[RMDB]
RNA sequence: GGGAACGACUCGAGUAGAGUCGAAAACUUUAUCGGUCUCAUGUACUACAACAGUAACGGCAAUCUGGGCGUGUUGGCCGGGCAAGCUUCUCAGCUCAAUGCGGUCGUCGACCUGCAAGACCGCAAUACCGAGUUGUCUUACCAACUGAUGCUGGACUAUGAUUCGUAAAUUCGUUUACGAAUCAUAAAAAGAAACAACAACAACAAC
Reactivity to 2A3 in 0.01 (KOAc 150mM, MgCl2 10mM, bicine 150mM(pH8.5), 24C), signal-to-noise 8, nucleotides 027 to 156: c020u100u120u100a080u100c030g010g020u010c010u010c020a040u070g030u060a130c040u060a040c060a190a020c030a100g060u090a120a070c040g090g010c060a050a080u050c040u070g020g010g020c040g020u040g020u100u150g060g000c010c000g000g020g000c030a020a010g010c010u100u040c040u020c050a020g010c000u010c040a030a080u050g000c010g000g010u000c000g060u040c050g060a150c040c020u060g030c040a080a050g000a010c000c000g000c000a010a010u050a030c020c030g000a000g010u010u010g010u010c020u050u060a100c020c030a080a070c050u090g020a050u090g030c020u030g010g030a020c010
Reactivity to DMS in 0.01 (KOAc 150mM, MgCl2 10mM, bicine 150mM(pH8.5), 24C), signal-to-noise 5, nucleotides 027 to 156: c040u000u000u000a070u000c020g020g040u000c010u000c030a080u000g030u010a100c060u000a120c070a100a080c070a090g010u000a090a110c030g020g000c050a090a100u000c060u000g010g020g010c050g050u000g020u010u000g020g020c030c050g030g000g030c040a040a040g010c020u000u000c030u000c020a050g020c020u000c030a090a240u000g010c020g010g020u000c010g010u010c050g010a110c090c060u020g000c050a040a090g010a020c000c010g030c010a050a100u000a040c020c010g010a050g010u000u000g000u000c030u000u000a150c030c010a050a140c070u010g000a110u010g020c020u000g010g020a170c150